About this RNA:
This 207-nucleotide RNA was probed chemically with 2A3. Conditions: 150 mM KOAc, 10 mM MgCl2 and 150 mM bicine (pH 8.5), 24 C. High 2A3 reactivity points to a flexible backbone, as in loops and unpaired stretches. It was measured as part of the RMDB library OK3TST. Values are in units of 0.01, from 0 to 300, in steps of 10.
[RMDB]
RNA sequence: GGGAACGACUCGAGUAGAGUCGAAAACGCAUGCGAGAGCAUGCGGCUAAGCUUCGGCUUAGUAAGAGAAACUUAGGAUUUUAGGCUCCCCGGCGUGUCUCGAACAAUGCCGGGCCAAACCCAUAGGGCUGGCGGUCCCUGUGCGGUUACAAUUCAAGCUACCAGUAGGUUUCGACCUACUGGUAGCAAAAGAAACAACAACAACAAC
Reactivity to 2A3 in 0.01 (KOAc 150mM, MgCl2 10mM, bicine 150mM(pH8.5), 24C), signal-to-noise 1, nucleotides 027 to 156: c000g030c000a000u000g020c000g020a110g000a010g120c000a000u020g020c000g000g000c000u000a000a000g010c000u040u160c230g050g000c000u000u000a000g020u060a130a010g060a010g000a040a070a040c150u110u060a100g000g010a090u140u100u040u150a120g060g000c020u090c000c010c000c020g000g010c000g000u000g020u000c100u080c270g150a100a050c050a040a150u090g020c000c000g000g000g000c000c000a010a000a000c000c000c000a030u050a000g000g000g010c010u020g030g150c100g060g000u070c010c000c000u000g000u000g030c120g020g000u000u020a030c050a130a160u030u040c060a130a020